[RMDB]
RNA sequence: GGGAACGACUCGAGUAGAGUCGAAAAUAUAUCUCCAUAUGUUGUUAAUGCUUGCGUUAUCUAUAGUGAAACUUCUCUUAGGCUCUUAUCAUAUGUUCAUAUGUGAAAAGAUACCAAGAUAAGGACAGUACGACUAUAAGUUCGCUUAUAGUCGUACAAAAGAAACAACAACAACAAC
Reactivity to DMS in 0.01 (KOAc 150mM, MgCl2 10mM, bicine 150mM(pH8.5), 24C), signal-to-noise 5, nucleotides 027 to 126: u010a140u010a080u010c040u030c000c100a100u030a100u000g020u000u000g000u010u010a090a110u020g000c080u010u010g010c120g000u000u000a060u000c020u000a050u010a070g010u010g000a070a080a080c020u000u000c050u000c010u000u010a060g020g010c300u000c010u010u000a040u000c000a020u000a030u000g010u010u020c170a040u020a020u000g030u000g000a010a080a020a040g000a040u000a110c010c000a040a010g010a010u000a010a020g000g010a070c130a100